[RMDB]
RNA sequence: GGGAACGACUCGAGUAGAGUCGAAAAGAUGCUGAAAAGCAAUUGUUACCCUUGUUUAGUCACUGCAUGAGUGAGCUUGGCUGCGCGGGUCGCGAUUAUCAGCAGAAUCAACAAUUGCUGGCGCAAGCCGCGGUUACGUUUUCGAACGUAACCGCGGAAAAGAAACAACAACAACAAC
Reactivity to DMS in 0.01 (KOAc 150mM, MgCl2 10mM, bicine 150mM(pH8.5), 24C), signal-to-noise 2, nucleotides 027 to 126: g010a170u000g040c000u010g000a060a070a120a060g020c020a030a040u000u000g010u000u000a170c080c000c010u010u000g000u000u000u000a020g010u000c020a020c200u000g030c050a200u040g000a150g010u000g010a050g000c040u000u010g000g030c010u000g010c040g020c150g000g010g000u000c120g020c040g020a090u000u000a110u000c140a030g010c110a060g000a070a060u010c120a070a020c050a040a030u010u000g010c020u000g010g000c210g000c140a050a070g000
Reactivity to 2A3 in 0.01 (KOAc 150mM, MgCl2 10mM, bicine 150mM(pH8.5), 24C), signal-to-noise 1, nucleotides 027 to 126: g030a040u060g000c040u100g070a030a080a050a070g000c000a020a010u020u020g060u020u060a070c030c000c000u000u120g030u090u130u100a030g000u020c000a000c140u030g000c030a120u070g150a110g230u130g060a030g040c000u020u060g000g020c000u060g000c040g000c000g000g090g010u030c030g020c020g070a050u110u130a060u240c050a030g070c010a030g100a040a040u140c050a010a040c020a070a020u070u030g000c000u020g050g000c040g000c020a030a010g000
The record gives the reactivity of an RNA of 177 nucleotides to DMS and 2A3. 2A3 adducts were read by reverse transcription with SuperScript II with manganese. Reactivities are given for positions 27 through 126. As a SHAPE reagent, 2A3 marks flexible, mostly unpaired nucleotides at the ribose 2'-OH. It was measured as part of the RMDB library OK2TST.